An RNA of 177 nucleotides, treated with 2A3 and read out base by base. For 2A3 the reverse transcriptase was SuperScript II with manganese. Conditions: 150 mM KOAc, 10 mM MgCl2 and 150 mM bicine (pH 8.5), 24 C. The 2A3 profile rests on 1,076 reads.
[RMDB]
RNA sequence: GGGAACGACUCGAGUAGAGUCGAAAACGCGUCAGAUUCGUCUGACGCGAAAGCAUAGAACAGCGCUAUGAUGUAUUAUAGUUCUAUGCAACUAUAGCGCUAAAACGAUACCGUUCGCGGUAUCGAACCCCUGAUCAGGCUUCGGCCUGAUCAGGGGAAAAGAAACAACAACAACAAC
Reactivity to 2A3 in 0.01 (KOAc 150mM, MgCl2 10mM, bicine 150mM(pH8.5), 24C), signal-to-noise 1, nucleotides 027 to 126: c000g000c000g040u010c010a040g000a020u030u060c050g030u020c070u010g000a020c020g020c010g000a000a000a000g020c000a040u050a090g050a090a030c020a040g000c010g000c050u010a010u020g040a080u060g120u170a250u270u090a070u230a090g070u030u010c030u010a040u020g000c020a000a000c010u030a000u010a060g000c000g010c000u030a050a120a000a000c010g000a000u000a000c010c010g010u020u030c250g000c050g110g010u010a000u030c000g000a010a000